Chemical mapping of a 177-nucleotide RNA with DMS and 2A3. For DMS the reverse transcriptase was MarathonRT.
RNA sequence: GGGAACGACUCGAGUAGAGUCGAAAACGCACCAGGUGCGCGUGCCCGCGGUGGUAGGCCGUGAUGCCCGCGGCGAUCGGGUCGACGCCCCCGCUGCGCCGCCACGGCCGCAGCGCCUCGUCGACGACGUCCAUGCUCGUUUCGACGAGCAUGGACGAAAAGAAACAACAACAACAAC
Reactivity to DMS in 0.01 (KOAc 150mM, MgCl2 10mM, bicine 150mM(pH8.5), 24C), signal-to-noise 2, nucleotides 027 to 126: c100g000c050a070c000c100a120g010g030u000g030c060g000c020g000u000g000c050c010c040g010c100g000g040u010g000g030u000a100g020g000c000c000g020u000g000a130u000g000c040c060c020g010c030g000g000c030g000a050u020c180g020g000g020u000c070g020a130c230g010c020c010c000c080c010g030c010u000g010c000g000c050c000g020c050c060a010c030g000g000c010c000g000c070a070g020c020g020c060c040u000c190g010u000c020g020a000c150g000a110
Reactivity to 2A3 in 0.01 (KOAc 150mM, MgCl2 10mM, bicine 150mM(pH8.5), 24C), signal-to-noise 1, nucleotides 027 to 126: c030g000c000a010c010c080a100g070g080u020g000c010g020c010g060u100g020c010c000c010g040c040g010g030u040g010g100u120a100g040g040c030c030g080u050g010a070u150g010c000c060c050g000c000g010g000c030g010a080u140c120g010g030g060u070c080g030a060c120g120c000c000c000c000c000g000c000u010g020c010g040c010c020g000c020c010a000c030g030g020c030c000g000c000a000g020c010g020c030c000u040c020g050u050c030g070a060c020g010a010
Background:
Conditions: 150 mM KOAc, 10 mM MgCl2 and 150 mM bicine (pH 8.5), 24 C. 2A3 adducts were read by reverse transcription with SuperScript II with manganese.